[RMDB]
RNA sequence: GGGAACGACUCGAGUAGAGUCGAAAAGUCGCCUUCCCGUCGUCGACCCGCGCCGUUCCAGCUUCCACUCUUUCGCUCACACGCACGGCGCCUCCCCCACAGUUCUCCGAUUCCAAUUUUCCGCAAGGUGGGUAAUUAGGUUCGCCUAAUUACCCACAAAAGAAACAACAACAACAAC
Reactivity to 2A3 in 0.01 (KOAc 150mM, MgCl2 10mM, bicine 150mM(pH8.5), 24C), signal-to-noise 5, nucleotides 027 to 126: g050u050c020g010c010c010u030u020c030c000c000g050u030c030g020u020c020g030a120c010c010c010g020c020g010c020c000g040u050u030c020c010a010g030c020u070u030c020c030a070c040u070c010u030u130u090c060g010c020u040c020a050c000a010c070g060c020a010c020g000g030c010g020c000c000u010c000c010c000c010c000a040c010a030g010u030u000c020u010c050c010g030a090u080u010c010c010a020a050u030u060u060u060c030c010g020c090a040a010g170
Reactivity to DMS in 0.01 (KOAc 150mM, MgCl2 10mM, bicine 150mM(pH8.5), 24C), signal-to-noise 3, nucleotides 027 to 126: g000u020c030g020c080c000u000u020c020c020c010g020u010c060g010u020c040g000a090c020c030c060g030c110g000c020c000g010u010u000c020c040a080g000c030u000u020c010c050a150c060u000c090u000u000u030c070g020c020u020c020a070c140a100c140g000c030a080c050g000g010c040g000c020c030u010c000c030c000c000c010a070c140a070g000u000u000c010u000c000c010g010a180u000u000c020c040a030a090u020u020u000u000c010c010g000c170a140a040g000